[RMDB]
RNA sequence: GGGAACGACUCGAGUAGAGUCGAAAAUUAAUAGAUGAUGUGGUAACGGGUGUUAUUAAUGGGGCUGUAUAUACAUUUUCAAAUAAUGAACUAAACAAAACUGGGUUAACUAAUAACAAUAAUUAUAUCACAACAUCUAUAAAAGUAGAGGAUAAUGUAGACUUAACAUAUUCGUAUGUUAAGUCUAAAAAGAAACAACAACAACAAC
Reactivity to DMS in 0.01 (KOAc 150mM, MgCl2 10mM, bicine 150mM(pH8.5), 24C), signal-to-noise 2, nucleotides 027 to 156: u000u000a180a110u010a050g020a060u000g010a120u000g060u010g040g040u010a020a110c170g030g010g000u000g020u000u000a010u000u010a020a070u030g010g050g050g000c060u000g000u000a040u000a140u000a170c010a040u000u000u010u010c040a090a100a170u000a050a070u000g000a060a300c080u000a040a040a220c040a030a080a110a140c130u000g000g000g010u000u010a050a110c010u000a010a050u010a050a080c010a030a080u000a050a090u010u000a180u000a000u000c020a050c000a020a100c000a020u000c010u010a020u010a060a050a070a160g000u000a060g010a130g010g000a130u000a100a080u000g000
Reactivity to 2A3 in 0.01 (KOAc 150mM, MgCl2 10mM, bicine 150mM(pH8.5), 24C), signal-to-noise 3, nucleotides 027 to 156: u100u070a000a040u010a050g010a030u000g000a010u000g000u030g030g010u000a090a040c070g070g060g090u020g010u030u040a030u010u060a050a090u100g000g000g050g000c010u000g040u040a060u020a010u040a070c010a000u040u060u020u200c060a070a090a050u110a080a070u060g030a070a020c050u090a220a010a000c040a050a090a020a050c090u080g000g000g030u050u070a050a000c010u020a030a050u070a020a030c000a000a020u140a160a020u210u180a150u040a010u270c010a000c000a020a070c000a010u000c000u000a000u050a040a170a000a000g050u110a020g000a020g040g060a070u080a170a030u190g020